The record gives the reactivity of an RNA of 177 nucleotides to 2A3 and DMS. The 2A3 profile rests on 26,577 reads. The reactions ran in a buffer of 150 mM KOAc, 10 mM MgCl2 and 150 mM bicine (pH 8.5), at 24 C. Reactivities are given for positions 27 through 126. It was measured as part of the RMDB library OK2TRN.
[RMDB]
RNA sequence: GGGAACGACUCGAGUAGAGUCGAAAAACACAAUGGGCCAAGAGCAAUUAACAUUAAUUAAACAGUCCCCAUAAAGAGGUUGCUGUGCUGACACAUUGAUAACCUCCGAAUGCACUUCGACUGCUAAGUAUGAUAUGUUAUUCGUAACAUAUCAUACAAAAGAAACAACAACAACAAC
Reactivity to 2A3 in 0.01 (KOAc 150mM, MgCl2 10mM, bicine 150mM(pH8.5), 24C), signal-to-noise 9, nucleotides 027 to 126: a010c060a010c030a040a100u080g030g030g010c020c020a090a020g040a020g060c040a060a120u120u100a090a040c020a070u110u210a170a080u070u120a120a160a030c010a010g040u010c010c020c000c010a030u080a040a060a010g020a010g000g010u020u020g000c010u010g010u020g010c040u050g050a030c010a000c000a070u030u050g070a130u190a040a010c000c000u000c000c010g040a050a020u080g010c080a010c050u130u110c050g060a030c020u020g010c020u050a130a010
Reactivity to DMS in 0.01 (KOAc 150mM, MgCl2 10mM, bicine 150mM(pH8.5), 24C), signal-to-noise 9, nucleotides 027 to 126: a080c080a060c120a070a070u000g010g010g010c050c030a070a080g010a090g010c080a060a060u000u000a060a100c080a080u010u000a050a090u010u010a070a090a120c040a060g010u000c010c070c050c030a050u000a040a120a080g000a030g010g010u000u000g010c020u000g010u000g010c060u000g020a110c230a120c010a020u000u000g000a090u010a010a030c010c000u000c010c030g010a180a060u000g000c100a050c120u000u010c110g000a060c060u000g010c050u010a080a150